[RMDB]
RNA sequence: GGGAACGACUCGAGUAGAGUCGAAAAUCGAACACACCACCCCCUGGUUGCUGCUCUCAGGCACACCAAAUGAAAAAUUGGUGACAACCUCCACGGCGCCUGAUUUUGUAGCAUUUAAUGUCUUUCAGUUACAUACAUGGUUCGCCAUGUAUGUAACAAAAGAAACAACAACAACAAC
Reactivity to 2A3 in 0.01 (KOAc 150mM, MgCl2 10mM, bicine 150mM(pH8.5), 24C), signal-to-noise 2, nucleotides 027 to 126: u070c000g030a060a000c070a010c000a050c050c000a030c010c000c000c000c010u030g130g010u100u030g000c020u000g000c000u000c000u000c010a010g000g000c000a000c000a000c040c000a000a010a010u090g090a020a060a090a050a010u020u020g000g000u000g020a060c010a010a050c000c000u060c100c070a030c090g040g040c030g000c030c000u000g010a030u010u040u150u200g020u010a000g010c000a020u050u140u050a140a100u080g080u040c010u010u070u000c050a040
Reactivity to DMS in 0.01 (KOAc 150mM, MgCl2 10mM, bicine 150mM(pH8.5), 24C), signal-to-noise 3, nucleotides 027 to 126: u020c100g000a090a140c120a090c110a080c030c030a220c030c020c010c010c030u000g040g030u000u000g040c000u000g000c010u000c170u000c060a040g000g030c000a300c020a010c010c000a000a020a130u010g020a080a110a060a080a200u000u010g000g000u000g010a160c190a100a190c020c020u010c120c120a080c200g010g010c100g000c010c000u000g000a020u000u020u010u000g010u000a020g020c010a050u000u000u010a070a080u020g000u010c050u010u010u000c100a110

The record gives the reactivity of an RNA of 177 nucleotides to 2A3 and DMS. The data come from the RNA Mapping Database (RMDB), library 15KREP. The DMS profile rests on 2,013 reads.